[RMDB]
RNA sequence: GGGAACGACUCGAGUAGAGUCGAAAAUGGACUUUUUACAGUUCCUACUUAUCCGGUUUUAACGCUGUUUUAUUGGCGCAAAGGUUCACGGAUAAACAACUAAUAAUUAAACCUUUUGUGUGCGAAAAUUGGACGUUUAGGUUCGCCUAAACGUCAACGACUCACAGUGAUUCGUCACUGUGAGUCGAAAAGAAACAACAACAACAAC
Reactivity to 2A3 in 0.01 (KOAc 150mM, MgCl2 10mM, bicine 150mM(pH8.5), 24C), signal-to-noise 2, nucleotides 027 to 156: u080g000g000a040c000u100u080u050u170u300a070c130a100g000u060u070c000c000u010a080c030u040u020a020u040c010c000g030g000u000u030u020u060a080a040c070g000c020u020g150u170u120u020u100a170u150u260g020g020c000g000c000a030a030a030g000g000u090u050c000a010c030g000g000a010u020a050a040a010c030a010a020c090u120a040a090u060a080a040u130u090a060a020a110c000c020u090u200u110u090g050u040g030u110g060c150g060a070a050a100a150u160u160g150g000a000c000g000u020u000u000a010g030g000u030u010c120g130c010c000u000a000a000a000c000g020u000c000a000a000

The record gives the reactivity of an RNA of 207 nucleotides to 2A3. The RNA was probed in 150 mM KOAc, 10 mM MgCl2 and 150 mM bicine (pH 8.5) at 24 C. The data come from the RNA Mapping Database (RMDB), library M2RFPK. Values cover nucleotides 27 to 156. The 2A3 profile rests on 632 reads.